[RMDB]
RNA sequence: GGGAACGACUCGAGUAGAGUCGAAAAGAGCACGUUUGCAGUUUCUAGCUUUCUUUCGGUGGUUUCUUAGGCCGUCUUUCCACCGUUCGGCCUUUUUGCUAGUUUCUUUCUGCUUUCGUGCUCGAGAGGGUCGGGUCGCGUUCGCGCGAUUCGACCCAAAAGAAACAACAACAACAAC
Reactivity to 2A3 in 0.01 (KOAc 150mM, MgCl2 10mM, bicine 150mM(pH8.5), 24C), signal-to-noise 3, nucleotides 027 to 126: g010a010g010c010a010c010g020u020u000u000g000c010a020g000u020u060u040c010u010a000g000c020u010u100u050c000u020u060u020c080g000g000u020g000g080u080u130u060c060u130u130a080g030g010c020c010g080u050c020u030u090u020c000c010a000c000c010g010u060u080c030g020g010c000c030u020u040u010u040u050g010c010u000a020g000u030u100u090c080u030u200u030c010u020g000c000u010u000u000c000g000u000g000c020u010c000g000a010g010a010